[RMDB]
RNA sequence: GGGAACGACUCGAGUAGAGUCGAAAACACGGGCAAUAUCCCAGAGCGGGCGCGCCGACGUGCUCUCUGCCUCGGUGCCCCCCCCCGUCCCUGUCCUGUCUCGGCUGGGGUGGUACGCACCGCCCGAGUCUGGGACAUGUUUCGACAUGUCCCAGACAAAAGAAACAACAACAACAAC
Reactivity to DMS in 0.01 (KOAc 150mM, MgCl2 10mM, bicine 150mM(pH8.5), 24C), signal-to-noise 1, nucleotides 027 to 126: c090a060c110g000g000g020c060a090a150u000a120u000c000c000c030a060g010a070g020c070g010g010g010c190g010c020g040c010c030g010a030c200g010u000g000c060u000c250u000c150u010g000c060c000u000c040g040g010u000g020c000c000c000c000c000c000c000c000c000g000u000c020c010c000u000g000u000c040c070u010g000u030c080u020c110g030g000c050u000g030g000g060g020u000g010g010u000a070c240g030c070a090c040c000g040c060c000c000g000a090
Chemical mapping of a 177-nucleotide RNA with DMS. For DMS the reverse transcriptase was MarathonRT. Conditions: 150 mM KOAc, 10 mM MgCl2 and 150 mM bicine (pH 8.5), 24 C.